Overview
An RNA of 177 nucleotides, treated with DMS and 2A3 and read out base by base. Source: RMDB libraries RFM100 and RFMREP, as collected in RNAgym. The reactions ran in a buffer of 150 mM KOAc, 10 mM MgCl2 and 150 mM bicine (pH 8.5), at 24 C.
RNA sequence: GGGAACGACUCGAGUAGAGUCGAAAACCGUUCACAACAUGUGAGGUGACUUUUAGGUUUAUUGCUGUAAUGUGUGAGACCCUCAGCUACGGCGACUGGGGACUAUAAGUUUCAGGAAGGAGGGGGCUCUAUGUAGCCGUUUCGACGGCUACAUAGAAAAAGAAACAACAACAACAAC
Reactivity to DMS in 0.01 (KOAc 150mM, MgCl2 10mM, bicine 150mM(pH8.5), 24C), signal-to-noise 4, nucleotides 027 to 126: c010c000g020u010u010c020a060c020a150a090c140a090u010g010u010g000a060g010g020u020g000a060c060u000u020u020u010a100g000g010u000u000u030a100u030u000g020c010u000g000u020a070a040u030g030u000g020u010g000a050g010a150c060c010c000u000c000a110g000c020u000a080c100g000g010c010g000a100c070u000g000g000g000g010a060c030u000a060u020a060a110g000u000u000u000c020a040g010g010a060a030g010g000a060g010g000g010g010g010c100
Reactivity to 2A3 in 0.01 (KOAc 150mM, MgCl2 10mM, bicine 150mM(pH8.5), 24C), signal-to-noise 4, nucleotides 027 to 126: c000c010g030u060u060c040a060c030a150a100c090a150u180g050u030g070a080g030g070u060g030a020c010u070u070u050u300a080g040g090u130u170u060a080u140u120g030c000u020g010u120a110a120u080g040u030g030u050g120a050g040a120c020c000c000u030c060a000g000c010u060a030c110g050g020c020g020a020c030u060g000g010g020g000a010c020u080a040u100a160a100g000u010u020u040c060a040g040g050a080a000g020g050a090g020g020g000g010g020c000